[RMDB]
RNA sequence: GGGAACGACUCGAGUAGAGUCGAAAACAAAGCACUCUUCACUAAGCUUAUCCAAUGCAUCAAGAAUCUUAUCAGCUAUUUCGCUAUCAAUGAUUCCUUGAGCUUUAAGCAUGGAUGUAUGAGCGUAGCCAGGCAUGGCCUUCGGGCCAUGCCUGGCAAAAGAAACAACAACAACAAC
Reactivity to 2A3 in 0.01 (KOAc 150mM, MgCl2 10mM, bicine 150mM(pH8.5), 24C), signal-to-noise 2, nucleotides 027 to 126: c060a010a060a060g000c000a100c030u080c000u100u060c070a080c040u040a130a130g000c000u000u060a000u000c020c080a170a040u190g040c050a160u000c000a000a000g000a000a000u100c000u020u090a050u180c120a000g000c000u060a300u030u300u300c120g020c000u020a020u050c200a160a110u210g000a000u000u000c010c000u000u000g000a000g000c000u070u110u000a060a040g000c050a050u010g000g000a130u080g040u000a140u050g000a000g030c030g050u130a030